[RMDB]
RNA sequence: GGGAACGACUCGAGUAGAGUCGAAAAGGAUCCUUCGUAGUCAGGGUAACUGCCUCCAGUACAGUUACCAGUGAAGACUAGUCAAUGUGUCAUCGUACUGGAGGAUGACGUAUUGAAUUAAGGAUCGCUACAUCAUAGUAUUCGUACUAUGAUGUAGAAAAGAAACAACAACAACAAC
Reactivity to DMS in 0.01 (KOAc 150mM, MgCl2 10mM, bicine 150mM(pH8.5), 24C), signal-to-noise 9, nucleotides 027 to 126: g000g000a010u000c000c000u000u000c230g010u000a010g010u000c000a170g010g000g000u000a010a010c010u000g010c120c030u010c170c170a100g010u010a220c010a010g000u000u000a010c000c000a110g010u010g010a110a020g000a020c010u000a100g000u000c010a010a010u000g000u000g000u000c000a010u000c010g020u010a120c150u000g000g010a090g010g000a010u000g000a010c000g010u000a010u000u000g000a030a020u010u010a040a020g020g000a010u000c000g000
Reactivity to 2A3 in 0.01 (KOAc 150mM, MgCl2 10mM, bicine 150mM(pH8.5), 24C), signal-to-noise 9, nucleotides 027 to 126: g030g000a000u000c000c000u020u040c090g090u020a010g000u000c020a020g070g030g000u010a010a000c000u010g020c000c030u080c060c030a050g050u120a040c000a000g000u000u000a010c000c010a010g020u020g090a160a000g010a000c000u000a010g040u010c000a000a010u010g010u000g000u000c000a000u010c020g110u100a080c070u140g140g050a060g110g000a010u010g000a000c000g000u010a010u000u020g010a020a010u080u050a030a010g000g000a000u000c000g000
Overview: Structure probing data (DMS and 2A3) for a 177-nucleotide construct. For DMS, 111,098 sequencing reads were counted. The RNA was probed in 150 mM KOAc, 10 mM MgCl2 and 150 mM bicine (pH 8.5) at 24 C. For 2A3 the reverse transcriptase was SuperScript II with manganese. It was measured as part of the RMDB library OK2TRN. The 2A3 profile rests on 83,909 reads.